[RMDB]
RNA sequence: GGGAACGACUCGAGUAGAGUCGAAAAUGGCAUGGGCAUGCAGAUGCAGAGGGAGAGGAGAAUGCAGGGGGUGAAUUGGGAGAAGCCCCUGUUUGCAGUUUGCAGUUUUCCUGCAACAUGUGGUCUUACCUGCCAUGAGCUGGGCAGGCAGGGCAGAACCAGCAGGUAAUUUCGAUUACCUGCUGGUAAAAGAAACAACAACAACAAC
Reactivity to 2A3 in 0.01 (KOAc 150mM, MgCl2 10mM, bicine 150mM(pH8.5), 24C), signal-to-noise 1, nucleotides 027 to 156: u000g010g050c030a030u010g030g010g020c050a070u050g010c000a010g040a150u130g060c070a040g060a080g040g040g000a100g000a020g020g030a000g050a060a020u130g000c030a020g000g010g010g000g000u010g070a120a060u120u030g060g020g000a100g020a060a000g000c000c000c000c020u040g030u020u070u040g000c010a030g010u060u100u040g000c010a000g000u030u000u110u200c000c000u000g000c000a020a020c020a080u100g030u080g060g010u030c020u000u060a080c010c000u020g040c000c000a130u080g000a000g060c020u060g030g020g030c000a000g010g000c000a000g020g000g000c020a010g030a060
Source information: Conditions: 150 mM KOAc, 10 mM MgCl2 and 150 mM bicine (pH 8.5), 24 C. An RNA of 207 nucleotides, treated with 2A3 and read out base by base. For 2A3, 713 sequencing reads were counted. It was measured as part of the RMDB library OK3TST.